Overview: An RNA of 177 nucleotides, treated with DMS and 2A3 and read out base by base. For DMS the reverse transcriptase was MarathonRT. 2A3 adducts were read by reverse transcription with SuperScript II with manganese. Reactivities are given for positions 27 through 126. High DMS reactivity at an A or C suggests that its Watson-Crick edge is free. Conditions: 150 mM KOAc, 10 mM MgCl2 and 150 mM bicine (pH 8.5), 24 C. Source: RMDB library TTRDES, as collected in RNAgym.

RNA sequence: GGGAACGACUCGAGUAGAGUCGAAAAGAUAUGGACGGUACAGGGAGCUGGUAUGGUCGGAAACGACCAUACAGCGAGGAUCUGUCACCGUCCUAAGUCAAAGCUCUGGGUCUUCGGACCCAGAGCAUCUAUCGAGUAACUUCGGUUACUCGAUAGAAAAAGAAACAACAACAACAAC
Reactivity to DMS in 0.01 (KOAc 150mM, MgCl2 10mM, bicine 150mM(pH8.5), 24C), signal-to-noise 3, nucleotides 027 to 126: g000a040u000a300u010g000g010a000c000g000g020u000a020c020a000g000g000g010a050g020c010u000g010g030u010a000u000g010g010u000c000g020g000a070a080a150c020g010a020c000c000a000u000a000c000a010g010c000g000a070g020g000a030u000c000u000g000u000c180a030c000c010g000u010c000c000u000a010a060g010u000c040a160a150a140g010c000u000c000u010g000g000g020u000c000u000u010c280g020g000a010c010c000c000a000g000a010g010c010a000
Reactivity to 2A3 in 0.01 (KOAc 150mM, MgCl2 10mM, bicine 150mM(pH8.5), 24C), signal-to-noise 1, nucleotides 027 to 126: g000a000u060a040u080g020g010a000c000g000g020u010a000c010a020g000g000g010a020g000c010u100g060g190u070a010u020g010g000u000c000g010g020a040a050a040c010g010a000c010c010a000u000a000c000a000g020c010g030a060g040g000a010u000c000u010g000u020c090a020c060c000g000u000c000c000u000a000a000g000u000c030a090a170a030g000c010u000c000u000g030g040g010u010c010u070u120c300g140g000a010c000c000c000a000g000a010g000c000a000